Source: RMDB library RFMREP, as collected in RNAgym. Chemical mapping of a 177-nucleotide RNA with DMS. The DMS profile rests on 718 reads. The RNA was probed in 150 mM KOAc, 10 mM MgCl2 and 150 mM bicine (pH 8.5) at 24 C.
RNA sequence: GGGAACGACUCGAGUAGAGUCGAAAACCCAGACACAUUCACGCAGGGCCCAGAGCAGCUGCCACUGUGGAAUCGAGUCGUGUAUUUUCCACUCCGCCCUUCUUGGGGUUGAUCAGAAGACAGGUUGCUAGAGCACUUAGUUCGCUAAGUGCUCUAGAAAAGAAACAACAACAACAAC
Reactivity to DMS in 0.01 (KOAc 150mM, MgCl2 10mM, bicine 150mM(pH8.5), 24C), signal-to-noise 1, nucleotides 027 to 126: c000c000c020a210g010a150c170a050c110a090u010u010c060a110c120g020c020a040g040g010g010c140c040c070a080g000a100g010c040a040g010c040u010g010c060c010a040c060u000g000u010g000g010a090a130u000c030g020a020g040u000c030g000u020g000u020a080u000u000u010u010c020c020a130c080u000c050c020g020c020c000c010u000u000c090u000u050g010g000g010g000u010u000g000a120u000c110a060g020a050a050g000a100c130a090g020g020u010u000g010